[RMDB]
An RNA of 207 nucleotides, treated with DMS and 2A3 and read out base by base. For 2A3 the reverse transcriptase was SuperScript II with manganese. 2A3 is a SHAPE reagent: it acylates the 2'-hydroxyl of flexible nucleotides of all four kinds. For 2A3, 3,114 sequencing reads were counted. The reactions ran in a buffer of 150 mM KOAc, 10 mM MgCl2 and 150 mM bicine (pH 8.5), at 24 C. Source: RMDB library RNAMAK, as collected in RNAgym. Reactivities are given for positions 27 through 156.
RNA sequence: GGGAACGACUCGAGUAGAGUCGAAAAGAUAUGGAAACUGACCAAGAGGUAUGAGAGGUCCUAUCGGAAACGAUAGGACUACCCACCUCAUACUACCCACCUUGCGUCAGUUUCCUAAGUCAAAACAGGCUAUGGCUCUUCGGAGCCAUAGCCUGAACAUUGAACUUUGGUUCGCCAAAGUUCAAUGAAAAGAAACAACAACAACAAC
Reactivity to DMS in 0.01 (KOAc 150mM, MgCl2 10mM, bicine 150mM(pH8.5), 24C), signal-to-noise 1, nucleotides 027 to 156: g000a140u020a000u000g000g000a000a000a020c000u000g020a050c020c020a030a070g020a300g000g000u020a000u000g020a050g000a210g030g000u030c000c000u000a000u000c000g000g000a110a000a140c020g020a020u000a020g080g020a020c000u000a000c000c000c020a300c050c020u000c000a000u000a000c000u000a000c000c090c170a300c110c000u030u000g000c000g010u000c000a020g050u000u000u000c020c020u000a000a000g000u000c020a110a020a110a110c030a030g080g090c000u020a060u020g000g000c000u000c000u000u000c300g050g020a030g000c000c000a000u000a000g000c000c000u000g000a000a040
Reactivity to 2A3 in 0.01 (KOAc 150mM, MgCl2 10mM, bicine 150mM(pH8.5), 24C), signal-to-noise 1, nucleotides 027 to 156: g000a000u000a000u020g000g000a000a000a030c000u000g000a000c000c000a000a000g000a000g000g010u010a000u000g000a000g000a000g000g000u000c000c000u000a000u000c000g000g000a020a000a000c000g000a000u020a000g010g010a000c010u010a010c000c010c010a030c000c000u000c000a000u000a000c000u020a020c040c090c030a070c020c000u010u020g030c070g020u000c000a000g000u000u000u010c000c000u000a000a000g000u000c010a000a040a030a090c000a010g010g000c000u000a000u010g010g000c010u010c020u080u140c300g080g010a000g010c000c000a010u000a000g000c000c000u000g000a000a000